[RMDB]
Source: RMDB library OK1LIB, as collected in RNAgym. An RNA of 177 nucleotides, treated with DMS and 2A3 and read out base by base. The DMS profile rests on 8,603 reads. Reactivities are given for positions 27 through 126. For 2A3, 5,870 sequencing reads were counted. The reactions ran in a buffer of 150 mM KOAc, 10 mM MgCl2 and 150 mM bicine (pH 8.5), at 24 C.

RNA sequence: GGGAACGACUCGAGUAGAGUCGAAAAGAGUUGUCAGGCAGCUUCUUCGACCUGACAGUCGCUGCCACUCCUAGUUGCGCAAAGGCAAUCGACAGCAGCGGCUCCGUGCGCCGCGAGGGCGUAGCAGCCGCGAUUCUUCCUUCGGGAAGGAUCGCGGAAAAGAAACAACAACAACAAC
Reactivity to DMS in 0.01 (KOAc 150mM, MgCl2 10mM, bicine 150mM(pH8.5), 24C), signal-to-noise 5, nucleotides 027 to 126: g000a080g010u020u010g010u000c020a000g000g010c130a190g010c220u000u030c120u020u030c070g010a130c000c020u020g010a020c020a020g010u000c020g000c010u000g010c000c050a150c190u000c030c140u010a170g000u000u000g010c000g010c180a080a160a130g000g010c010a010a030u010c130g000a110c230a140g000c010a070g010c000g000g000c000u010c070c070g000u010g020c020g000c000c000g000c140g010a130g010g000g000c020g020u010a030g020c160a120g010
Reactivity to 2A3 in 0.01 (KOAc 150mM, MgCl2 10mM, bicine 150mM(pH8.5), 24C), signal-to-noise 6, nucleotides 027 to 126: g080a010g050u090u090g000u020c010a000g030g000c000a060g010c180u160u060c030u140u100c170g130a220c030c000u010g010a000c000a000g000u000c010g010c010u010g000c010c030a080c040u070c010c040u060a060g050u010u020g010c050g030c160a160a070a120g160g000c010a010a030u100c060g030a030c040a030g000c000a010g010c000g000g000c000u000c000c010g070u040g000c010g010c000c000g030c090g130a150g130g010g000c010g000u000a030g020c020a020g030